Chemical mapping of a 177-nucleotide RNA with 2A3 and DMS. For DMS, 39,080 sequencing reads were counted. The RNA was probed in 150 mM KOAc, 10 mM MgCl2 and 150 mM bicine (pH 8.5) at 24 C. For DMS the reverse transcriptase was MarathonRT. For 2A3 the reverse transcriptase was SuperScript II with manganese. Values are in units of 0.01, from 0 to 300, in steps of 10.
RNA sequence: GGGAACGACUCGAGUAGAGUCGAAAACAGUCAUAGGGACCGGUUCUGAGUCACCACCCGUGAGCUGAGCAGUUGAGACCUGGCGGAGUCCCAGGCUCUCGCUAAGAGGAGGGGGCUCAUGUUGGGGUAUACGAUAGAUAUUCGUAUCUAUCGUAUAAAAAGAAACAACAACAACAAC
Reactivity to 2A3 in 0.01 (KOAc 150mM, MgCl2 10mM, bicine 150mM(pH8.5), 24C), signal-to-noise 6, nucleotides 027 to 126: c000a010g060u030c020a050u300a300g050g000g030a110c220c070g040g000u080u060c080u140g100a060g090u100c030a030c050c010a030c000c000c010g020u040g040a050g040c050u030g020a010g030c060a060g030u250u230g060a050g010a110c010c000u010g000g020c050g060g080a060g040u060c020c010c000a020g100g010c020u010c000u000c020g010c050u100a100a040g020a050g070g030a040g010g000g010g000g000c000u000c010a040u130g040u050u060g010g000g000g020
Reactivity to DMS in 0.01 (KOAc 150mM, MgCl2 10mM, bicine 150mM(pH8.5), 24C), signal-to-noise 9, nucleotides 027 to 126: c040a050g010u010c040a070u000a130g020g000g000a080c120c080g000g010u000u000c080u000g010a100g010u000c080a070c030c030a110c020c010c030g010u010g010a070g010c020u010g000a100g010c100a080g010u000u010g010a090g000a090c010c010u000g010g010c040g010g000a070g000u000c050c000c000a050g010g010c060u000c000u000c100g000c140u010a090a120g000a080g010g000a110g010g000g000g010g000c010u000c010a020u000g020u000u000g010g000g000g010